[RMDB]
RNA sequence: GGGAACGACUCGAGUAGAGUCGAAAAGGUGCCGGGUCUGAAUCUGGGUGCCGGCGACCCCAUGAGCGGAUUGCGGCAGGCCGUCGCCGCUCGGCAUGGCUUUGCGCAGGACGUCGCCAAUGUCGGCGGGCUAACACACCUUCGGGUGUGUUAGCCCAAAAGAAACAACAACAACAAC
Reactivity to 2A3 in 0.01 (KOAc 150mM, MgCl2 10mM, bicine 150mM(pH8.5), 24C), signal-to-noise 1, nucleotides 027 to 126: g020g010u100g000c000c000g080g000g000u000c110u050g140a230a110u000c040u240g040g010g000u050g300c010c000g000g010c020g100a020c020c020c020c020a050u170g060a000g050c020g000g060a020u040u280g020c040g000g030c020a000g030g090c040c020g000u010c130g000c080c000g000c130u130c130g000g000c050a060u030g010g020c000u050u300u190g000c090g000c020a010g020g000a040c000g000u130c120g010c020c020a100a180u060g090u150c030g000g020c040
The data come from the RNA Mapping Database (RMDB), library OK1LIB. An RNA of 177 nucleotides, treated with 2A3 and read out base by base. For 2A3, 446 sequencing reads were counted. The reactions ran in a buffer of 150 mM KOAc, 10 mM MgCl2 and 150 mM bicine (pH 8.5), at 24 C.